RNA sequence: GGGAACGACUCGAGUAGAGUCGAAAAUAAAAUCGUAGGCCGAGACGAUCGACGUAAAUCGCUCAAACUACUCGAGACCAAAGGAAUACGCUUCGGUAACUCGCUCUAAUCCCGAGCGAUAAAUGAACGACAGUACACUAUUCGUAGUGUACUGUCGAAAAGAAACAACAACAACAAC
Reactivity to DMS in 0.01 (KOAc 150mM, MgCl2 10mM, bicine 150mM(pH8.5), 24C), signal-to-noise 2, nucleotides 027 to 126: u030a060a080a120a130u020c010g000u000a070g010g010c050c020g000a060g010a010c020g000a050u000c030g020a040c100g000u010a050a080a060u010c110g070c040u020c070a150a060a220c050u000a010c040u010c010g000a020g010a160c090c060a060a090a070g000g000a100a080u010a070c100g010c040u000u000c040g030g030u000a050a160c080u000c010g000c000u000c010u000a060a200u000c030c030c010g000a020g010c000g030a010u000a020a080a080u010g060a080a120
Reactivity to 2A3 in 0.01 (KOAc 150mM, MgCl2 10mM, bicine 150mM(pH8.5), 24C), signal-to-noise 2, nucleotides 027 to 126: u050a000a020a020a020u030c020g020u020a050g030g010c000c050g000a020g010a060c010g030a080u080c030g030a010c050g040u100a010a050a130u130c100g010c050u050c060a070a110a070c010u020a000c000u000c000g030a000g030a060c020c040a000a150a010g190g030a140a050u110a160c060g000c090u050u030c010g000g000u030a070a070c040u020c020g000c000u000c010u050a040a100u030c000c010c010g000a000g000c030g000a010u080a060a090a040u160g010a090a040